RNA sequence: GGGAACGACUCGAGUAGAGUCGAAAAGGCCAUACGACCACUUCCAACACCAUGCACUCAGUAUUUUCCACUGAAGGAAUUUUUUGGGGCACCUAGAGGAUCUCGUAAUUCAAUAUACCGCAGUUCCUUUGGUGCGCUUUUGUAUUGGUCGGAACUCGCCUGUGAAUGAUUUCGAUCAUUCACAGGCAAAAGAAACAACAACAACAAC
Reactivity to 2A3 in 0.01 (KOAc 150mM, MgCl2 10mM, bicine 150mM(pH8.5), 24C), signal-to-noise 2, nucleotides 027 to 156: g030g080c020c010a060u030a080c010g010a020c010c000a020c040u140u000c100c020a110a010c110a060c030c000a060u120g000c060a030c050u060c000a000g000u020a180u080u060u100u060c020c070a040c020u100g090a140a080g010g020a030a030u150u110u010u020u080u150g020g000g020g030c000a000c000c030u110a050g000a010g020g010a010u000c020u020c020g020u060a010a100u130u210c120a150a020u200a070u100a300c050c060g050c050a000g000u030u010c000c000u000u000u020g000g000u010g010c000g020c050u010u140u050u190g050u010a050u090u030g000g000u000c000g000g060a040a020c030u050c080
Overview
The record gives the reactivity of an RNA of 207 nucleotides to 2A3. As a SHAPE reagent, 2A3 marks flexible, mostly unpaired nucleotides at the ribose 2'-OH. Source: RMDB library OK3TST, as collected in RNAgym.